Source: RMDB library TTRDEL, as collected in RNAgym. Structure probing data (2A3 and DMS) for a 177-nucleotide construct. The reactions ran in a buffer of 150 mM KOAc, 10 mM MgCl2 and 150 mM bicine (pH 8.5), at 24 C. For 2A3, 14,988 sequencing reads were counted. Reactivities are given for positions 27 through 126.

[RMDB]
RNA sequence: GGGAACGACUCGAGUAGAGUCGAAAAGAUAUGGAUCGAAUGGACAUGCCUUUCCUCUCGGAAACGAGAGGUAGGGCAACAGCCCGCUUCGAUCCUAAGUCAAAAGAAGUCAGUUCGCUGACUUCAAGUAUUAGGGUUACUUCGGUAACCCUAAUACAAAAGAAACAACAACAACAAC
Reactivity to 2A3 in 0.01 (KOAc 150mM, MgCl2 10mM, bicine 150mM(pH8.5), 24C), signal-to-noise 4, nucleotides 027 to 126: g030a020u080a030u180g000g000a000u000c010g010a010a040u270g010g000a040c070a120u170g000c000c010u020u040u000c010c010u000c000u010c000g000g040a080a080a070c010g000a000g000a000g000g000u010a000g000g000g000c010a000a000c010a000g030c000c000c000g030c080u010u010c010g000a000u020c000c000u010a060a010g030u020c040a000a040a020a210g020a010a000g000u010c010a000g010u050u180c240g030c180u000g000a000c020u010u000c010a000a020
Reactivity to DMS in 0.01 (KOAc 150mM, MgCl2 10mM, bicine 150mM(pH8.5), 24C), signal-to-noise 5, nucleotides 027 to 126: g010a040u000a300u000g010g000a010u000c000g000a050a030u010g000g000a020c040a300u000g000c010c000u000u000u000c000c000u000c000u000c000g010g000a110a070a160c010g000a000g010a000g010g020u000a000g020g000g000c000a020a030c170a140g020c010c000c000g000c260u000u000c000g000a000u000c000c000u000a020a100g000u010c040a070a050a080a090g000a010a000g000u000c000a010g020u000u010c220g010c000u000g000a000c000u000u000c000a020a120